An RNA of 207 nucleotides, treated with 2A3 and read out base by base.

[RMDB]
RNA sequence: GGGAACGACUCGAGUAGAGUCGAAAAGCGCCGCCACCAAUAAUAAAUUGCGCAAAACAGUUUGACUGUCCAGCGUUCUUAACGUUGGCAAUCUUCAUCCACGCACGAGAACCACCCGGCGAGACGGGCAGCUUAUCCUGAGCUUGAACUCCAGCCACAUCUGAGCUAAAUUCGUUUAGCUCAGAUGAAAAGAAACAACAACAACAAC
Reactivity to 2A3 in 0.01 (KOAc 150mM, MgCl2 10mM, bicine 150mM(pH8.5), 24C), signal-to-noise 2, nucleotides 027 to 156: g020c010g030c000c020g100c020c010a070c020c040a080a080u210a070a060u110a040a120a070u210u190g000c020g020c040a000a030a080a080c060a050g060u070u130u100g060a040c000u010g050u170c020c000a010g000c000g020u010u080c090u200u240a040a000c000g000u000u050g000g000c000a000a080u000c000u090u020c020a120u040c060c000a050c010g040c000a040c060g060a070g010a120a000c030c010a040c000c000c000g030g020c090g020a050g030a030c010g010g010g000c010a010g000c040u100u010a040u030c010c030u050g010a030g020c000u050u090g040a010a020c060u020c030c030a030g020c030c030a030
Notes
The 2A3 profile rests on 805 reads. It was measured as part of the RMDB library OK3TST.